RNA sequence: GGGAACGACUCGAGUAGAGUCGAAAACUUUCAUUUUCAUUCGUAACUAUUACAUGUGUAGCAAUCACAUAUUCGAACUGCUCCGAAUAUGGAUUUAAAAAUCUGUGGGCAGUGAUUGCGCAUGGGAGCAGCAGGCUAUGUUCGCAUAGCCUGCUGCAAAAGAAACAACAACAACAAC
Reactivity to 2A3 in 0.01 (KOAc 150mM, MgCl2 10mM, bicine 150mM(pH8.5), 24C), signal-to-noise 1, nucleotides 027 to 126: c000u040u030u040c050a200u080u190u300u300c030a130u070u050c000g080u180a300a050c050u050a230u180u270a000c000a300u080g130u050g000u050a000g010c000a000a000u030c000a000c200a300u030a230u300u000c050g000a050a050c000u000g020c000u060c000c000g110a100a000u180a080u270g000g040a130u050u070u300a000a010a010a000a010u050c050u100g000u300g000g000g000c000a000g000u000g180a000u000u000g000c000g000c000a000u090g000g170g030a080
Record summary
The record gives the reactivity of an RNA of 177 nucleotides to 2A3. For 2A3 the reverse transcriptase was SuperScript II with manganese. Reactivities are given for positions 27 through 126. The reactions ran in a buffer of 150 mM KOAc, 10 mM MgCl2 and 150 mM bicine (pH 8.5), at 24 C. The 2A3 profile rests on 296 reads.